[RMDB]
RNA sequence: GGGAACGACUCGAGUAGAGUCGAAAAGAUAUGGAUCGUAGGGAGAAGAUGGGUCGGAAACGACCCACCUUCUUUGAUCUACAUCCUAAGUCAAACAUGACGGACCUGUUCGCAGGUCCGUCAUGAACAUUGUAUGCUUCUUCGGAAGCAUACAAUGAAAAGAAACAACAACAACAAC
Reactivity to 2A3 in 0.01 (KOAc 150mM, MgCl2 10mM, bicine 150mM(pH8.5), 24C), signal-to-noise 2, nucleotides 027 to 126: g020a030u100a020u170g010g000a010u060c200g010u000a000g030g020g000a020g000a020a000g000a020u000g000g000g000u010c000g050g000a030a050a070c000g010a000c020c010c000a000c000c000u000u010c000u090u040u040g020a030u030c000u010a000c000a010u010c000c000u030a200a060g090u030c040a000a080a150c000a030u010g000a000c000g000g000a010c010c000u040g050u110u140c300g000c150a000g010g000u000c020c000g000u000c010a000u000g000a000a010
Reactivity to DMS in 0.01 (KOAc 150mM, MgCl2 10mM, bicine 150mM(pH8.5), 24C), signal-to-noise 5, nucleotides 027 to 126: g010a030u000a300u000g000g000a000u000c170g030u000a010g010g000g010a000g010a010a000g010a020u000g000g000g020u000c000g010g000a080a070a190c010g000a010c000c000c000a000c010c000u000u000c000u000u000u020g000a060u020c010u000a010c000a070u000c000c000u010a040a150g000u000c030a130a120a290c010a010u000g000a030c010g000g000a010c000c000u000g020u000u000c220g020c000a010g020g000u000c000c000g000u000c000a000u000g010a090a190